[RMDB]
RNA sequence: GGGAACGACUCGAGUAGAGUCGAAAAGGUUGAGUUCUAUGAAGAAAACAAACAGGGAACUGGAUGGAUGAUGGUGCCAUUGACUGAGACAUAGGAAAGUGAAAGGGAAAGAAGUCAAGAGUCCCAGUCCCCACAUUAUCCAAACAGAGACAUCAGACUAGCGUACCUCAUUCGUGAGGUACGCUAGAAAAGAAACAACAACAACAAC
Reactivity to 2A3 in 0.01 (KOAc 150mM, MgCl2 10mM, bicine 150mM(pH8.5), 24C), signal-to-noise 1, nucleotides 027 to 156: g090g010u050u060g020a050g080u130u000c040u050a120u260g030a000a090g060a060a050a040a050c050a000a140a040c110a120g070g000g030a040a030c000u010g010g020a020u000g020g000a010u020g020a000u050g060g080u020g070c070c040a050u020u140g010a060c020u020g010a010g000a000c020a000u290a020g040g040a000a030a080g040u030g040a090a020a010g000g000g020a100a080a020g000a010a010g000u000c040a000a030g050a000g060u000c020c000c000a000g020u080c000c020c000c000a050c000a000u040u170a010u010c070c000a070a000a000c060a030g040a000g020a070c010a040u120c040a030g020a080